[RMDB]
RNA sequence: GGGAACGACUCGAGUAGAGUCGAAAACGAUCUGUUCGCAGAUCGAGCUACGGAGACGUAGCAGAGCACGACAGAGCUCUGGGUCGUGCGAUACCGGAAAUAAGACCAUUUGCACGAGUGCUAGCAAGUGGCAGAGCUCAAAGAAACAGCACUCGAAUGCAGUAGUCCGUUUCGACGGACUACUGCAAAAAGAAACAACAACAACAAC
Reactivity to 2A3 in 0.01 (KOAc 150mM, MgCl2 10mM, bicine 150mM(pH8.5), 24C), signal-to-noise 1, nucleotides 027 to 156: c000g000a000u000c000u000g080u040u110c300g000c070a000g020a050u000c000g000a030g000c000u000a010c000g080g000a140g020a040c040g000u000a000g020c000a000g090a010g060c000a000c010g000a000c010a000g020a030g030c000u010c010u040g100g010g000u000c000g000u000g000c000g020a010u080a130c010c030g070g110a030a050a050u200a090a000g110a050c000c000a000u000u000u000g040c030a030c100g000a020g000u000g030c000u010a040g010c030a030a000g020u000g010g020c000a000g000a000g000c000u000c050a140a160a000g150a000a110a020c030a030g000c000a000c000u010c000g020a080a060